Conditions: 150 mM KOAc, 10 mM MgCl2 and 150 mM bicine (pH 8.5), 24 C. The record gives the reactivity of an RNA of 177 nucleotides to 2A3 and DMS. It was measured as part of the RMDB library TTRDES. The DMS profile rests on 4,894 reads. For 2A3, 11,437 sequencing reads were counted.

RNA sequence: GGGAACGACUCGAGUAGAGUCGAAAAGAUAUGGAUGUCCUUCAGCUCAUAACGUCGCCAGUCGGAAACGACUGCGAUAUCAAGCUGAGGACAUCCUAAGUCAAAGACGCCUCUUCGGAGGCGUCAACCAUAUAUGCACCUUCGGGUGCAUAUAUGGAAAAGAAACAACAACAACAAC
Reactivity to 2A3 in 0.01 (KOAc 150mM, MgCl2 10mM, bicine 150mM(pH8.5), 24C), signal-to-noise 5, nucleotides 027 to 126: g010a000u010a010u070g010g010a000u000g010u000c020c020u210u300c050a010g010c010u120c280a300u240a300a040c100g010u020c000g140c240c170a000g000u000c010g000g020a030a010a010c010g000a000c000u010g000c000g000a000u000a020u060c180a300a240g000c000u000g000a000g000g000a000c000a000u000c000c000u000a000a000g000u000c010a030a080a140g010a000c000g000c020c020u010c060u070u120c300g180g000a000g010g010c020g000u000c000a000a000
Reactivity to DMS in 0.01 (KOAc 150mM, MgCl2 10mM, bicine 150mM(pH8.5), 24C), signal-to-noise 4, nucleotides 027 to 126: g020a020u000a260u010g000g010a000u000g020u000c000c010u000u000c010a010g020c000u000c300a140u010a120a110c220g010u000c000g000c170c130a020g020u010c000g010g000a060a040a100c010g000a000c000u000g000c000g000a000u000a050u020c270a070a080g010c010u000g010a040g010g010a000c000a000u000c000c000u000a010a060g000u000c020a090a130a160g010a000c000g020c010c000u000c000u000u010c180g000g020a000g010g020c000g010u000c000a000a100